[RMDB]
RNA sequence: GGGAACGACUCGAGUAGAGUCGAAAAGCUGACACCUUACAGGAAACUCCUGUUGUGCCUGAUACUGUUGAAGUCCCACCGCAAGUGGUGAAACUUCCGUCUGCACCUCAGACUAUCCAGCCCGAGGCCUACUUAGCGAGUUCGCUCGCUAAGUAGGAAAAGAAACAACAACAACAAC
Reactivity to 2A3 in 0.01 (KOAc 150mM, MgCl2 10mM, bicine 150mM(pH8.5), 24C), signal-to-noise 2, nucleotides 027 to 126: g000c020u000g020a000c010a060c040c010u050u080a040c020a020g000g040a060a190a100c060u060c020c010u010g000u050u070g000u020g030c000c010u020g030a030u090a110c010u080g110u170u060g030a010a000g020u030c000c030c000a000c010c020g090c080a080a030g000u020g080g060u130g000a090a050a020c000u020u010c000c020g020u000c020u020g000c050a010c020c010u060c010a020g000a080c020u030a060u090c010c000a010g000c000c000c010g050a050g000g070
Reactivity to DMS in 0.01 (KOAc 150mM, MgCl2 10mM, bicine 150mM(pH8.5), 24C), signal-to-noise 2, nucleotides 027 to 126: g000c020u000g030a090c070a060c130c190u010u020a080c100a090g000g000a130a090a120c160u010c020c020u000g000u000u000g020u000g000c030c040u000g020a080u010a050c140u000g010u000u030g020a010a040g020u000c030c000c000a010c010c010g040c210a090a240g020u000g000g020u010g010a050a040a020c020u000u000c010c140g000u000c010u000g000c050a110c040c020u000c020a010g020a030c020u000a060u000c080c060a070g000c010c000c030g000a070g010g000